[RMDB]
RNA sequence: GGGAACGACUCGAGUAGAGUCGAAAAGCGGCGUUGGCCGCCGGCGCCGAUGAUGUUUCGGCGGCCGUCUCAUCAUUUUUCGGCGCCUACGCGCGGGACUACCAGGCGUUCAGCGUGCAGGUCGAGGGUCCGACGAGGUGUUCGCACCUCGUCGGACAAAAGAAACAACAACAACAAC
Reactivity to 2A3 in 0.01 (KOAc 150mM, MgCl2 10mM, bicine 150mM(pH8.5), 24C), signal-to-noise 1, nucleotides 027 to 126: g050c020g050g000c060g080u170u250g220g010c030c000g000c000c000g020g000c030g000c000c000g010a040u050g060a070u130g220u110u130u020c050g000g000c030g030g040c000c000g080u000c020u000c000a120u060c010a030u060u090u030u140u120c010g030g020c040g080c000c000u050a050c000g040c000g000c000g000g000g040a030c060u180a140c050c010a120g120g020c050g210u010u000c010a000g000c030g030u000g010c040a010g000g030u020c110g000a110g010g070